[RMDB]
RNA sequence: GGGAACGACUCGAGUAGAGUCGAAAACAGUGAUGGAAACAUCACUGAAAAACGUGGAAGCGCAUCACGAAAAAGUCGAUCGAAUACCGAUCGACAAGCGCUAAAGUCAUGCCGAAAGGCAUGACAAACCUAUGGACGUGUUCGCACGUCCAUAGGUAAAAGAAACAACAACAACAAC
Reactivity to 2A3 in 0.01 (KOAc 150mM, MgCl2 10mM, bicine 150mM(pH8.5), 24C), signal-to-noise 3, nucleotides 027 to 126: c010a000g010u000g000a000u010g000g040a030a030a000c000a000u020c000a000c000u000g000a020a000a000a010a020c010g000u000g010g000a090a030g000c000g010c000a020u040c010a020c080g240a140a010a000a000a000g000u000c000g000a000u000c010g010a030a030u120a300c110c010g000a010u000c000g000a000c000a000a000g000c000g000c000u010a040a030a010g000u010c000a000u000g000c000c000g080a090a050a040g000g000c000a000u000g000a010c000a010a010
Reactivity to DMS in 0.01 (KOAc 150mM, MgCl2 10mM, bicine 150mM(pH8.5), 24C), signal-to-noise 2, nucleotides 027 to 126: c030a020g030u030g000a000u000g000g060a170a120a240c000a010u000c010a030c000u000g000a070a050a040a120a120c000g010u000g000g000a180a000g000c000g000c000a300u000c000a010c000g000a030a060a010a020a020g040u000c030g000a000u000c000g000a240a090u030a130c250c040g010a000u000c000g000a000c010a040a050g050c000g020c000u010a090a100a130g000u010c000a000u000g000c040c020g000a080a090a080g030g040c010a000u010g040a000c000a020a020

The data come from the RNA Mapping Database (RMDB), library OK1LIB. The record gives the reactivity of an RNA of 177 nucleotides to 2A3 and DMS. For DMS the reverse transcriptase was MarathonRT. For 2A3 the reverse transcriptase was SuperScript II with manganese. For DMS, 2,900 sequencing reads were counted. The reactions ran in a buffer of 150 mM KOAc, 10 mM MgCl2 and 150 mM bicine (pH 8.5), at 24 C.